[RMDB]
Notes: Chemical mapping of a 207-nucleotide RNA with DMS and 2A3. 2A3 adducts were read by reverse transcription with SuperScript II with manganese. For DMS, 1,982 sequencing reads were counted. It was measured as part of the RMDB library VIROID. For 2A3, 4,785 sequencing reads were counted.
RNA sequence: GGGAACGACUCGAGUAGAGUCGAAAAGCGACCAACGGACGACAAUUGUCGAGGCGGCUCUGAUACCAUUUGUCACGGGCCUAGCCCUUCGGCCACCACACUUGGCCCAUGCGGCACUCCCAUGCCAGGGAGCCAGCCUUAUCAACCGAGGCAACGAGAAUAGUAUGCAGUUCGCUGCAUACUAUUCAAAAGAAACAACAACAACAAC
Reactivity to DMS in 0.01 (KOAc 150mM, MgCl2 10mM, bicine 150mM(pH8.5), 24C), signal-to-noise 1, nucleotides 027 to 156: g000c030g000a170c000c020a050a120c030g000g000a100c050g010a090c050a110a140u000u010g000u000c060g030a150g000g020c000g030g030c020u000c050u010g050a260u010a070c110c150a160u000u000u000g000u000c050a110c130g000g050g020c030c010u000a110g050c010c040c000u020u000c030g000g000c010c040a090c060c110a120c100a090c050u000u000g020g000c010c020c070a100u020g020c100g030g000c000a060c030u010c090c020c050a200u020g000c110c130a140g020g060g040a070g020c020c000a100g000c010c000u000u000a150u010c070a130a120c150c050g050a220g020g020c020a090a090c020g000a260
Reactivity to 2A3 in 0.01 (KOAc 150mM, MgCl2 10mM, bicine 150mM(pH8.5), 24C), signal-to-noise 5, nucleotides 027 to 156: g040c030g040a210c020c020a110a090c060g020g040a010c030g010a000c050a150a300u240u270g000u040c020g000a020g000g010c030g000g000c000u010c020u050g070a090u120a200c040c040a140u140u090u140g060u060c050a050c110g000g000g000c000c060u050a050g000c010c000c010u080u070c040g010g000c000c010a050c040c040a090c000a050c070u070u050g010g000c000c030c020a030u120g020c080g020g000c010a010c030u010c000c010c020a020u050g000c020c000a060g020g000g000a000g000c020c020a010g000c010c000u060u080a130u140c040a030a080c030c010g050a040g000g030c040a080a040c070g010a030